[RMDB]
Description
Structure probing data (2A3 and DMS) for a 177-nucleotide construct. The DMS profile rests on 1,768 reads. Conditions: 150 mM KOAc, 10 mM MgCl2 and 150 mM bicine (pH 8.5), 24 C.
RNA sequence: GGGAACGACUCGAGUAGAGUCGAAAAAUUUGAACUGAAAUUUGUUGAUCUGCGGUUUAUUUUCAAGAGAUCAAAACGAAGAUAAGUGGUGGCACAAGUUUACUUUAGCGAAUUUAUCGCUAUGUUACAGCAAAGCCAUAUUCGUAUGGCUUUGCUGAAAAGAAACAACAACAACAAC
Reactivity to 2A3 in 0.01 (KOAc 150mM, MgCl2 10mM, bicine 150mM(pH8.5), 24C), signal-to-noise 2, nucleotides 027 to 126: a010u080u070u160g000a050a050c010u080g060a010a030a030u050u130u020g010u020u070g000a070u040c030u020g080c030g130g000u080u100u060a080u010u130u040u000c010a100a050g030a000g040a140u110c000a000a130a020a020c070g060a040a040g020a030u050a030a060g070u050g150g050u000g000g110c070a010c000a000a050g000u060u050u020a070c060u040u070u040a000g020c000g050a090a120u100u250u040a230u110c000g000c000u020a040u020g070u100u100a000
Reactivity to DMS in 0.01 (KOAc 150mM, MgCl2 10mM, bicine 150mM(pH8.5), 24C), signal-to-noise 2, nucleotides 027 to 126: a100u010u030u000g030a090a100c110u020g000a040a000a140u000u000u000g000u030u000g000a040u000c000u040g030c160g000g000u020u000u000a030u020u000u050u000c090a060a080g000a220g000a140u030c200a060a010a080a090c130g020a020a040g000a000u000a000a030g000u010g000g060u000g030g040c120a100c040a030a080g000u000u000u010a050c100u020u000u000a010g040c000g010a020a170u000u060u070a100u000c000g000c010u030a010u000g030u000u000a150